Chemical mapping of a 207-nucleotide RNA with DMS and 2A3.
For DMS the reverse transcriptase was MarathonRT.
For 2A3, 1,569 sequencing reads were counted.
The reactions ran in a buffer of 150 mM KOAc, 10 mM MgCl2 and 150 mM bicine (pH 8.5), at 24 C.

RNA sequence: GGGAACGACUCGAGUAGAGUCGAAAAUGUACUCGUGCGAGUAAUCCACGAUCGCUACAACGCGCUAAGCAAUGGAGAUGAUUCUUGAGGGAAGCAAUUCUGCAGAGACAUCUCCACCCUGGGGUGGCGUCGCCAGAAUACACCGACCCGUUACAGGCCUACAAGAGUGGUUCGCCACUCUUGUAGGAAAAGAAACAACAACAACAAC
Reactivity to DMS in 0.01 (KOAc 150mM, MgCl2 10mM, bicine 150mM(pH8.5), 24C), signal-to-noise 1, nucleotides 027 to 156: u010g040u000a000c010u000c010g000u020g020c050g020a080g040u010a160a130u000c000c010a070c030g040a090u010c030g040c020u000a080c020a100a080c060g000c060g080c080u000a150a110g040c110a070a030u000g000g010a070g000a020u000g000a000u010u020c010u020u000g010a300g000g000g040a090a190g000c250a090a190u010u000c030u010g000c060a210g000a020g000a030c010a010u000c040u010c010c000a000c000c060c020u000g020g000g010g000u000g000g020c080g040u000c020g000c020c050a160g010a080a080u000a050c030a090c010c010g030a110c030c010c000g020u000u060a090c070a140g020g010
Reactivity to 2A3 in 0.01 (KOAc 150mM, MgCl2 10mM, bicine 150mM(pH8.5), 24C), signal-to-noise 3, nucleotides 027 to 156: u080g000u020a010c010u010c030g010u050g050c160g010a020g050u150a060a170u030c000c000a010c030g000a050u110c030g010c050u040a070c070a080a080c090g000c010g000c070u230a090a070g060c020a090a260u080g000g000a000g000a000u000g020a110u100u000c030u020u040g050a130g030g040g020a010a040g060c060a020a270u080u000c020u070g030c050a020g000a000g010a020c000a000u000c000u000c010c000a000c000c000c010u020g000g020g000g020u060g030g000c030g070u020c010g020c030c000a030g090a140a050u110a040c030a000c010c050g070a030c010c000c000g010u020u070a010c030a040g050g010